[RMDB]
RNA sequence: GGGAACGACUCGAGUAGAGUCGAAAAGCCGCCGUGAUCGCGUCCAGGGUUGCCGGCGACCAGUUCGGGUUGCGAUCCUUGUCGAUCAACUGCGCGCGGAUGCCCUCCACCAGGUCAUGCGAGCGCAACCUUAUGUACGGUUCGCCGUACAUAAGGUAAAAGAAACAACAACAACAAC
Reactivity to 2A3 in 0.01 (KOAc 150mM, MgCl2 10mM, bicine 150mM(pH8.5), 24C), signal-to-noise 7, nucleotides 027 to 126: g060c020c030g030c050c040g120u070g010a020u010c020g010c060g110u030c040c040a020g000g020g020u020u030g070c040c030g110g050c020g020a030c030c050a060g040u160u110c060g050g040g040u050u120g020c010g010a010u020c000c010u050u120g080u090c020g020a030u020c020a060a100c060u070g000c010g000c010g000c000g030g020a000u030g010c020c000c000u060c070c020a150c030c040a010g010g000u030c010a010u080g140c020g020a020g010c010g010c020a020
Reactivity to DMS in 0.01 (KOAc 150mM, MgCl2 10mM, bicine 150mM(pH8.5), 24C), signal-to-noise 8, nucleotides 027 to 126: g010c040c040g010c090c080g010u000g010a020u000c030g020c140g010u010c120c100a070g010g000g010u000u000g010c050c080g000g010c030g000a030c050c080a130g020u010u010c100g010g000g010u000u000g010c020g000a030u000c010c040u000u000g010u000c040g000a060u000c030a090a100c210u000g010c010g020c030g010c010g010g000a030u000g000c060c010c000u010c100c170a130c240c150a100g010g000u010c020a020u000g000c010g000a050g000c030g010c030a060